An RNA of 207 nucleotides, treated with 2A3 and read out base by base.
RNA sequence: GGGAACGACUCGAGUAGAGUCGAAAAGAGAUGCAAAUCAAAACCACAGUAAGCAAUCAUCUUACCCCAGUUAGAAUGGCUGUUACGGAAAAGACACCAACAAAUGCUGGUGAGGAUGCAAGGAAAAGGAAACUCUUAUACACUGUUGGUGGGAAUGGCUCCAAACAUGAUUCGUCAUGUUUGGAGCAAAAGAAACAACAACAACAAC
Reactivity to 2A3 in 0.01 (KOAc 150mM, MgCl2 10mM, bicine 150mM(pH8.5), 24C), signal-to-noise 1, nucleotides 027 to 156: g050a000g030a020u070g070c040a000a040a110u120c100a040a060a040a000c130c040a050c040a040g080u120a140a000g040c000a060a100u110c010a000u070c030u150u100a160c070c080c030c000a020g000u100u040a090g000a300a300u080g020g010c150u010g090u070u090a090c120g180g020a100a070a010a070g090a000c000a000c000c000a000a060c010a060a110a100u250g000c000u000g030g000u010g070a010g000g050a010u040g030c020a020a100g120g060a040a000a040a040g000g060a000a300a000c010u040c000u090u000a030u040a200c060a050c050u040g040u150u060g110g010u080g000g000g090a050a120u140g010